Chemical mapping of a 177-nucleotide RNA with DMS and 2A3.
The 2A3 profile rests on 2,808 reads.
The RNA was probed in 150 mM KOAc, 10 mM MgCl2 and 150 mM bicine (pH 8.5) at 24 C.

[RMDB]
RNA sequence: GGGAACGACUCGAGUAGAGUCGAAAAAAAAGAUAUGGACGGUCGCGCUCUUGGAUUUAUACACUGAUAGGUUCGGAAACGAACCUGUUUGGUGUAUUGUCAGAGCACGACCGUCCUAAGUCAAAAACAUGAUUAUGUUGUUCGCAACAUAAUCAUGAAAAGAAACAACAACAACAAC
Reactivity to DMS in 0.01 (KOAc 150mM, MgCl2 10mM, bicine 150mM(pH8.5), 24C), signal-to-noise 3, nucleotides 027 to 126: a060a050a110a080g010a070u000a300u010g010g000a010c000g010g010u000c000g020c030g000c000u000c000u000u010g030g000a020u010u020u000a000u000a020c010a010c000u000g000a000u000a010g010g010u000u000c000g010g010a070a110a250c000g000a020a000c000c000u000g010u010u000u010g050g000u000g000u000a000u000u000g000u000c000a000g010a010g000c010a020c000g000a010c000c000g000u000c000c000u000a000a090g010u010c020a060a090a070a090a160
Reactivity to 2A3 in 0.01 (KOAc 150mM, MgCl2 10mM, bicine 150mM(pH8.5), 24C), signal-to-noise 1, nucleotides 027 to 126: a000a000a000a040g090a050u090a050u080g020g020a000c010g000g000u020c000g030c000g030c020u010c010u080u170g060g020a000u050u300u020a020u030a010c010a010c030u000g020a010u010a010g040g000u020u010c010g000g020a080a100a050c000g000a010a020c040c000u000g010u000u030u130g040g010u000g000u000a010u000u000g010u030c000a000g030a020g000c000a010c000g010a000c000c000g000u000c000c000u000a010a010g000u000c000a010a000a010a040a040